[RMDB]
RNA sequence: GGGAACGACUCGAGUAGAGUCGAAAAUUGUGCAAUCUCGGCUCACUGCAACUUCUGCCUCCUGGCUUCAUGCGAUUCUUCUGCCUCAGCCUCUCGAGUAGCUGAGAUUACAGGUGCCUGCCACCAUACCUGGCUAAUUUUUGUAUUUUUAGUAGAACUGAGUACUGAUGUUCGCAUCAGUACUCAGAAAAGAAACAACAACAACAAC
Reactivity to 2A3 in 0.01 (KOAc 150mM, MgCl2 10mM, bicine 150mM(pH8.5), 24C), signal-to-noise 1, nucleotides 027 to 156: u150u150g040u010g080c010a010a020u010c000u000c050g000g000c050u020c030a010c000u030g020c010a090a070c020u100u030c060u030g020c020c010u000c010c020u060g020g010c000u080u070c030a020u040g010c010g110a020u070u020c000u110u000c020u070g030c050c000u050c010a000g000c000c000u020c000u020c070g030a050g020u040a040g020c000u010g020a010g010a020u070u030a020c020a030g010g010u020g040c030c050u070g010c000c010a010c000c010a020u050a070c000c010u010g000g090c010u030a070a120u070u020u000u010u150g050u010a100u020u060u010u000u010a020g110u110a000g010a040a010